[RMDB]
RNA sequence: GGGAACGACUCGAGUAGAGUCGAAAACCACGGUCGGCAGGGGAUUCCGUAAACCGAUCGUGGAGGACUAGUGCUUUACGGAAUCCCCUGGCACUGGUCCAAGUGGAGAUGCGAAAGCAUUUCCACAGGUCCUUGAUGCGUUCGCGCAUCAAGGACCAAAAGAAACAACAACAACAAC
Reactivity to 2A3 in 0.01 (KOAc 150mM, MgCl2 10mM, bicine 150mM(pH8.5), 24C), signal-to-noise 1, nucleotides 027 to 126: c000c040a010c000g000g010u050c050g010g110c020a000g000g070g010g000a030u010u000c010c000g020u020a000a000a000c020c020g000a070u050c030g030u060g050g110a160g010g100a000c040u040a040g050u060g210c070u030u010u020a000c000g000g000a000a000u000c000c050c000c030u000g010g050c000a000c000u060g010g000u110c110c020a090a000g000u000g000g000a000g000a000u010g000c000g030a040a000a000g000c000a000u000u000u020c000c000a000c000a010